RNA sequence: GGGAACGACUCGAGUAGAGUCGAAAACACAUGCAGCCGAGUUGGCUGGCUCGGAAGGGGGACAGAGUUGACCAUGACAGCGAGUGUGGCCAAGGUGACAGCUGCACGCCCGGAGCCAAGCGCGGCGUCAUGCUCACUUAUUCGUAAGUGAGCAUGAAAAAGAAACAACAACAACAAC
Reactivity to 2A3 in 0.01 (KOAc 150mM, MgCl2 10mM, bicine 150mM(pH8.5), 24C), signal-to-noise 6, nucleotides 027 to 126: c050a000c010a020u130g070c050a010g000c010c000g030a040g100u070u050g160g000c010u000g000g010c000u010c010g110g170a140a140g100g010g020g000g020a020c020a040g140a020g070u050u060g040a030c000c020a040u100g090a060c020a030g070c040g090a090g080u170g040u080g060g000c020c020a060a030g080g030u090g050a020c020a020g030c010u020g000c030a020c040g060c000c000c000g030g020a010g000c010c010a030a010g030c030g010c030g020g000c000g010
Reactivity to DMS in 0.01 (KOAc 150mM, MgCl2 10mM, bicine 150mM(pH8.5), 24C), signal-to-noise 9, nucleotides 027 to 126: c100a140c180a080u010g010c110a120g020c010c010g000a120g010u000u010g010g010c030u000g000g010c010u000c010g020g010a130a100g010g000g000g000g010a190c060a070g000a130g010u000u010g000a100c030c020a070u000g010a100c100a090g010c080g010a120g020u000g010u000g000g010c020c020a040a070g010g010u000g000a100c120a100g000c010u000g000c070a060c040g010c010c010c010g000g010a080g010c010c020a030a070g010c060g000c050g000g010c030g010